[RMDB]
RNA sequence: GGGAACGACUCGAGUAGAGUCGAAAAAAAAGGAUAGAUUUCUUUACUCAAAGUGGAAAGCUUGAAGUUACACGAAAUGGAAAUCUAUAUGAAAUGAUAUUUCCAGAAAUAAUGCCUAUUGAAAUAGACCUACUAGCAUGUUCGCAUGCUAGUAGGUAAAAGAAACAACAACAACAAC
Reactivity to 2A3 in 0.01 (KOAc 150mM, MgCl2 10mM, bicine 150mM(pH8.5), 24C), signal-to-noise 2, nucleotides 027 to 126: a000a000a000a000g150g000a000u030a020g010a010u000u000u000c000u040u240u150a070c040u000c100a080a040a030g000u020g010g170a260a140a000g010c020u000u010g090a190a000g000u100u070a020c100a050c000g110a120a040a140u150g000g000a010a010a010u000c000u000a000u010a020u090g080a060a070a000u150g070a000u060a040u210u000u000c000c000a010g150a100a100a000u190a070a040u120g060c000c020u060a070u140u180g030a020a020a020u110a030g060
Reactivity to DMS in 0.01 (KOAc 150mM, MgCl2 10mM, bicine 150mM(pH8.5), 24C), signal-to-noise 3, nucleotides 027 to 126: a030a030a060a080g020g000a000u010a000g000a010u010u000u000c000u000u000u000a040c030u020c120a090a030a020g000u010g010g020a050a090a140g000c020u000u000g000a140a120g000u000u000a050c130a080c280g020a060a080a060u010g000g000a000a000a000u000c000u000a010u000a060u010g000a070a050a020u040g000a170u040a130u000u020u010c020c040a080g000a110a040a090u000a090a060u040g020c120c040u000a100u040u010g000a070a080a040u020a090g000

Record summary: The record gives the reactivity of an RNA of 177 nucleotides to 2A3 and DMS. Source: RMDB library OK1LIB, as collected in RNAgym. For 2A3, 963 sequencing reads were counted.